[RMDB]
RNA sequence: GGGAACGACUCGAGUAGAGUCGAAAACUGCGGUGCGGCAGUGUGGAGACCUGCCGUAAGCCGUGUUGUUUUGACAACCGGGAGAAAGCGUAUGCGGAGGCAGCGCUUUCAGGGUCUUAUUGCCAUGUAGCUAGUUUCGUUUCGACGAAACUAGCUAAAAAGAAACAACAACAACAAC
Reactivity to DMS in 0.01 (KOAc 150mM, MgCl2 10mM, bicine 150mM(pH8.5), 24C), signal-to-noise 1, nucleotides 027 to 126: c010u000g020c120g000g010u030g000c030g000g000c030a000g000u030g060u010g050g000a300g030a070c250c000u000g020c000c010g000u000a120a070g070c000c000g010u020g000u010u000g020u000u000u000u000g000a090c200a040a060c000c000g040g000g040a100g010a010a000a010g010c000g070u010a170u030g000c000g000g020a250g000g000c000a000g020c010g000c000u000u000u000c000a100g000g000g000u000c030u070u040a100u000u030g070c130c000a180u030g020
Reactivity to 2A3 in 0.01 (KOAc 150mM, MgCl2 10mM, bicine 150mM(pH8.5), 24C), signal-to-noise 2, nucleotides 027 to 126: c040u050g000c010g060g000u080g010c020g000g000c000a020g010u010g070u080g220g030a000g030a130c000c000u000g040c000c010g040u080a110a000g030c000c010g020u030g030u000u080g000u010u000u040u030g030a030c000a060a070c060c000g020g070g000a210g020a020a000a000g010c000g000u010a300u110g040c030g020g270a080g210g010c000a020g000c000g000c000u010u000u000c000a010g020g000g000u050c050u070u240a190u060u120g050c020c030a080u140g060